[RMDB]
RNA sequence: GGGAACGACUCGAGUAGAGUCGAAAAUCGAAUUUGACGCUCUCAACAAGAUACUUAAGAAAGGAGGCCUGUUUAAGAAGGCUCUAGAUUUCUUGGAUCACAUGGAUUUAAGGCGACCUGAAUUCACAUGUAGUUUCGAUUUCGAUCGAAACUACAUAAAAGAAACAACAACAACAAC
Reactivity to 2A3 in 0.01 (KOAc 150mM, MgCl2 10mM, bicine 150mM(pH8.5), 24C), signal-to-noise 2, nucleotides 027 to 126: u100c010g000a010a050u060u020u040g000a000c030g010c000u000c010u020c100a010a030c020a060a000g000a050u120a190c030u190u240a080a000g040a020a020a000g060g020a020g070g070c010c020u130g100u090u150u040a100a300g080a000a010g020g000c000u000c020u030a050g040a220u000u030u000c040u010u020g000g030a010u020c010a020c010a140u140g130g000a090u120u110u080a080a050g060g000c020g070a120c010c020u020g060a020a050u080u040c070a060c000
Reactivity to DMS in 0.01 (KOAc 150mM, MgCl2 10mM, bicine 150mM(pH8.5), 24C), signal-to-noise 3, nucleotides 027 to 126: u000c110g020a050a150u010u000u010g010a120c040g000c020u010c030u010c120a070a130c100a060a090g020a030u000a060c030u000u000a040a050g010a070a000a020g000g010a080g010g010c000c010u000g000u010u020u010a110a140g020a090a030g000g010c020u010c020u010a070g020a180u000u000u000c000u000u000g000g020a040u000c020a090c170a150u010g000g000a100u000u000u010a100a090g020g000c050g010a070c180c050u000g010a020a050u000u010c030a060c220